The record gives the reactivity of an RNA of 170 nucleotides to 2A3 and DMS. For 2A3 the reverse transcriptase was SuperScript II with manganese. The reactions ran in a buffer of 150 mM KOAc, 10 mM MgCl2 and 150 mM bicine (pH 8.5), at 24 C.
RNA sequence: GGGAACGACUCGAGUAGAGUCGAAAACAUGGUCCCAGCCUCCUCGCUGGCGCCGGCUGGGCAACAUUCCGAGGGGACCGUCCCUCGGUAAUGGCGAAUGGGACCCAGAACUCUCUCUAGAUUCCCAGUAGCACUAGCUUCGGCUAGUGCAAAAGAAACAACAACAACAAC
Reactivity to 2A3 in 0.01 (KOAc 150mM, MgCl2 10mM, bicine 150mM(pH8.5), 24C), signal-to-noise 8, nucleotides 027 to 129: c060a120u170g000g000u040c000c000c000a000g020c000c000u070c000c000u060c100g020c030u050g090g000c040g050c070c000g040g010c030u070g000g010g030c050a030a010c020a050u060u020c000c000g010a010g010g010g010g070a110c050c070g300u300c010c000c000u010c000g020g000u040a020a020u040g000g000c060g080a060a080u060g010g000g010a020c010c010c000a020g030a080a020c000u010c000u000c000u000c000u030a030g000a110u020u010c000c000c000a010g040u050a020
Reactivity to DMS in 0.01 (KOAc 150mM, MgCl2 10mM, bicine 150mM(pH8.5), 24C), signal-to-noise 5, nucleotides 027 to 129: c070a100u060g030g040u060c010c020c000a050g000c040c020u040c090c040u020c210g050c060u020g070g050c120g000c010c030g010g010c010u000g040g030g090c110a060a020c040a090u060u020c030c000g050a010g000g000g000g010a070c060c300g130u130c020c000c020u010c020g050g040u010a040a010u030g060g030c050g070a100a150u050g000g000g000a000c010c000c070a110g040a090a120c000u020c000u050c050u040c030u010a040g020a260u020u020c000c020c030a090g020u080a050
Values cover nucleotides 27 to 129.